[RMDB]
RNA sequence: GGGAACGACUCGAGUAGAGUCGAAAAUUAAAGCGCGAAAAAGAUCGAUCGAUCCUUUGAACGCGCAAGUCGAAGUUUGAUACGGGCAUACUAGCUAGCUAGCUAGCAAAACAAACUUCGUAAAAAAUCAGGUUUAAAGGUUCGCCUUUAAACCUGAAAAAGAAACAACAACAACAAC
Reactivity to DMS in 0.01 (KOAc 150mM, MgCl2 10mM, bicine 150mM(pH8.5), 24C), signal-to-noise 1, nucleotides 027 to 126: u030u010a130a110a200g000c010g000c010g000a110a090a020a050a040g000a030u000c010g000a130u030c240g000a000u000c090c020u010u000u000g000a180a090c040g010c000g020c000a060a050g040u000c000g040a010a030g010u000u000u000g010a040u000a100c170g020g020g070c180a150u000a150c000u000a000g000c020u010a150g020c240u000a070g010c010u040a010g010c010a030a060a050a110c000a000a000a000c010u000u010c000g030u010a000a020a060a050a050a030
Reactivity to 2A3 in 0.01 (KOAc 150mM, MgCl2 10mM, bicine 150mM(pH8.5), 24C), signal-to-noise 1, nucleotides 027 to 126: u080u080a140a050a020g000c000g010c020g010a010a070a000a000a070g000a020u020c040g040a080u230c210g030a020u030c040c030u080u050u010g100a210a020c020g010c000g000c000a000a000g130u030c000g000a020a000g000u000u020u010g130a130u090a220c110g010g070g030c020a050u060a170c030u000a000g050c000u000a030g160c050u090a000g000c000u000a020g000c090a000a100a000a000c020a010a000a000c000u000u000c020g000u110a180a060a000a000a000a000